[RMDB]
RNA sequence: GGGAACGACUCGAGUAGAGUCGAAAAACAAGAUUGUUUAUAAUGAAACGUUGCAGGAAUCGUACGUUAUCGAUUCGUAUGAUGGUAGGACGGGUCUUUUACGAAUUCAACAGGCCGAUAGAAGCAACAGCCAGAAACUAUUCGUAGUUUCUGGCUGAAAAGAAACAACAACAACAAC
Reactivity to DMS in 0.01 (KOAc 150mM, MgCl2 10mM, bicine 150mM(pH8.5), 24C), signal-to-noise 4, nucleotides 027 to 126: a090c090a110a110g000a110u020u000g000u000u010u000a080u040a070a040u010g000a080a040a080c140g000u000u000g020c000a050g020g030a080a010u010c010g010u010a030c050g020u010u000a160u020c180g020a120u010u000c020g000u000a020u000g020a020u000g010g000u020a090g000g010a070c060g010g000g000u010c030u000u020u000u000a030c060g010a050a040u020u010c110a050a050c050a070g010g020c090c010g000a040u000a040g010a240a130g000c050a030a120
Reactivity to 2A3 in 0.01 (KOAc 150mM, MgCl2 10mM, bicine 150mM(pH8.5), 24C), signal-to-noise 3, nucleotides 027 to 126: a000c030a030a070g050a210u040u120g030u020u060u010a250u090a170a210u120g100a130a070a020c060g010u050u030g050c050a040g190g000a070a030u010c000g010u050a020c030g050u050u060a020u270c040g030a070u010u060c000g000u010a000u050g120a010u120g020g070u090a050g000g080a020c030g000g080g000u010c000u050u170u000u000a060c040g040a120a110u110u100c040a110a070c050a070g060g010c060c020g010a070u020a080g200a060a010g000c000a010a010
The record gives the reactivity of an RNA of 177 nucleotides to DMS and 2A3. For 2A3 the reverse transcriptase was SuperScript II with manganese. In probing experiments dimethyl sulfate is read out at A N1 and C N3, which are open when not base-paired. The data come from the RNA Mapping Database (RMDB), library OK1LIB. The DMS profile rests on 7,345 reads. DMS adducts were read by reverse transcription with MarathonRT.